[RMDB]
RNA sequence: GGGAACGACUCGAGUAGAGUCGAAAAGGCUAUGAAUGCAUAUCCUCUUGUAGUCACUCCUCUUGUUUCAGCAGGCAUAUUUGGUGUAAAACCAGCUGUGUCUUUUGAUUAUCUUAUUAGGGAGGCUUAAGAUCUCAGUUCGCUGAGAUCAAAAGAAACAACAACAACAAC
Reactivity to DMS in 0.01 (KOAc 150mM, MgCl2 10mM, bicine 150mM(pH8.5), 24C), signal-to-noise 9, nucleotides 027 to 129: g020g010c040u000a210u020g000a130a080u060g070c060a090u030a100u030c070c030u030c100u020u020g030u030a000g030u010c070a130c100u030c000c000u050c120u000u000g000u010u000u000c000a000g060c100a050g000g000c000a040u020a050u030u030u020g020g000u000g020u000a100a070a160a030c000c000a040g010c060u000g030u020g030u000c030u000u000u000u000g000a050u010u000a040u040c090u030u020a110u020u010a100g010g000g000a040g000g000c030u040u020a030a170
Reactivity to 2A3 in 0.01 (KOAc 150mM, MgCl2 10mM, bicine 150mM(pH8.5), 24C), signal-to-noise 9, nucleotides 027 to 129: g030g000c030u050a050u150g150a160a060u240g080c040a060u050a080u170c020c010u040c040u060u110g080u060a010g010u030c020a020c120u010c010c000u060c010u070u080g060u010u030u000c000a010g010c000a000g020g000c010a000u010a010u030u030u020g030g000u040g030u120a110a160a010a010c000c000a000g000c020u000g000u000g000u000c000u000u030u020u010g020a030u000u110a120u100c110u130u120a170u050u090a080g020g020g000a000g000g010c000u060u040a070a020